[RMDB]
The record gives the reactivity of an RNA of 177 nucleotides to DMS and 2A3.
For DMS the reverse transcriptase was MarathonRT.
For 2A3 the reverse transcriptase was SuperScript II with manganese.
High DMS reactivity at an A or C suggests that its Watson-Crick edge is free.
Values cover nucleotides 27 to 126.
RNA sequence: GGGAACGACUCGAGUAGAGUCGAAAAGAUAUGGACAGACGAUGAAACCUAAACCCGUUGAAAUCGGAAACGAUGGAGGGUGGGUGGAGUCUGUCCUAAGUCAAACGGUGGGCUUCGGCCCACCGAAUCUUAUGGCAUAGUUCGCUAUGCCAUAAGAAAAAGAAACAACAACAACAAC
Reactivity to DMS in 0.01 (KOAc 150mM, MgCl2 10mM, bicine 150mM(pH8.5), 24C), signal-to-noise 3, nucleotides 027 to 126: g010a020u000a300u010g010g000a020c000a020g000a010c010g000a120u000g000a160a190a020c000c000u010a060a150a060c000c000c000g010u010u030g010a100a150a010u000c010g010g000a140a090a110c000g030a020u000g000g010a070g030g020g040u000g000g010g020u000g010g000a040g010u000c000u000g010u000c000c000u000a000a060g010u000c020a110a140a240c020g000g030u000g000g010g000c000u000u000c200g020g000c000c000c000a000c000c000g010a030a030
Reactivity to 2A3 in 0.01 (KOAc 150mM, MgCl2 10mM, bicine 150mM(pH8.5), 24C), signal-to-noise 2, nucleotides 027 to 126: g010a020u040a040u080g000g010a010c010a000g000a000c000g220a300u070g000a040a030a030c010c010u140a290a220a110c020c000c010g110u270u030g050a040a010a010u020c000g000g010a060a040a020c030g000a000u020g020g070a000g000g020g000u020g000g020g010u000g000g010a000g010u000c000u000g000u020c000c000u000a010a010g010u000c030a000a000a150c020g010g000u000g000g050g000c000u110u120c300g140g000c010c000c000a010c020c000g010a010a000